[RMDB]
RNA sequence: GGGAACGACUCGAGUAGAGUCGAAAAUCACGGCAGCCGGGCCAACGCGCAUAGAUAAUCUGGUCGCACCGCUGCCCCACAAGGGCACCGACAGGCGCAUCACAGAUAUCACCGAAUGACUUCGGAGCGUCCGAAGGCAUUUCGAUGCCUUCGGACGAAAAGAAACAACAACAACAAC
Reactivity to DMS in 0.01 (KOAc 150mM, MgCl2 10mM, bicine 150mM(pH8.5), 24C), signal-to-noise 2, nucleotides 027 to 126: u010c070a070c010g000g070c020a090g000c130c040g020g020g000c150c010a060a000c100g000c060g030c300a080u020a110g090a070u000a070a070u000c010u000g000g000u000c050g000c000a020c040c010g000c220u000g000c000c000c000c010a150c300a180a300g000g060g000c000a120c190c000g000a090c120a140g000g000c040g000c140a050u030c040a050c090a020g040a000u000a030u050c020a290c050c000g040a000a070u040g000a060c140u070u000c000g050g000a120g000
Reactivity to 2A3 in 0.01 (KOAc 150mM, MgCl2 10mM, bicine 150mM(pH8.5), 24C), signal-to-noise 3, nucleotides 027 to 126: u100c020a010c000g000g000c000a000g010c070c010g060g010g000c050c050a060a040c100g040c000g000c020a070u070a150g020a030u090a060a190u110c010u010g020g000u030c000g000c010a020c020c010g000c000u000g000c000c000c010c000a170c020a060a070g020g000g000c020a030c040c010g060a060c050a050g090g000c020g000c060a020u080c010a030c000a000g020a010u030a030u030c040a030c010c030g050a050a060u150g100a080c070u050u020c020g000g000a020g100
The record gives the reactivity of an RNA of 177 nucleotides to DMS and 2A3. As a SHAPE reagent, 2A3 marks flexible, mostly unpaired nucleotides at the ribose 2'-OH. DMS (dimethyl sulfate) methylates the pairing face of unpaired adenines and cytosines. The reactions ran in a buffer of 150 mM KOAc, 10 mM MgCl2 and 150 mM bicine (pH 8.5), at 24 C. For DMS the reverse transcriptase was MarathonRT.